[RMDB]
RNA sequence: GGGAACGACUCGAGUAGAGUCGAAAACUAAGGAGCGUGUGCUGGCGGCGGUCCUUCACGGUGCGAUGAACGGGGCGGAUUACCAGUACGUGGGCGAGUGGUGUGCCCUGCUCCGUGCAUCGGAAAAGGUUGUGGCGUCUUUCGGGGCGCCACGACCAAAAGAAACAACAACAACAAC
Reactivity to DMS in 0.01 (KOAc 150mM, MgCl2 10mM, bicine 150mM(pH8.5), 24C), signal-to-noise 5, nucleotides 027 to 126: c060u010a080a100g010g010a060g010c050g020u010g000u030g000c020u000g010g020c070g020g000c030g000g000u010c020c010u000u000c060a110c060g010g010u010g000c020g000a100u010g000a090a010c010g010g010g000g000c010g000g010a110u010u030a050c030c010a040g010u020a070c090g010u010g000g010g010c040g000a140g020u010g000g010u010g010u030g010c090c040c000u010g000c020u000c010c030g000u000g000c020a030u000c000g020g010a050a060a080a090
Reactivity to 2A3 in 0.01 (KOAc 150mM, MgCl2 10mM, bicine 150mM(pH8.5), 24C), signal-to-noise 8, nucleotides 027 to 126: c030u050a040a070g070g000a050g050c010g000u060g020u070g050c020u020g050g000c000g020g000c010g010g070u020c010c000u020u030c030a040c060g050g030u100g020c010g020a050u050g040a020a000c000g010g000g000g000c010g010g020a040u060u100a050c000c000a020g110u080a060c050g060u110g000g050g030c040g020a050g060u060g010g040u090g030u090g040c000c000c000u030g000c000u000c000c000g000u000g000c000a010u000c000g020g000a050a050a020a010
Structure probing data (DMS and 2A3) for a 177-nucleotide construct. Values cover nucleotides 27 to 126. The 2A3 profile rests on 18,803 reads. DMS adducts were read by reverse transcription with MarathonRT. For 2A3 the reverse transcriptase was SuperScript II with manganese.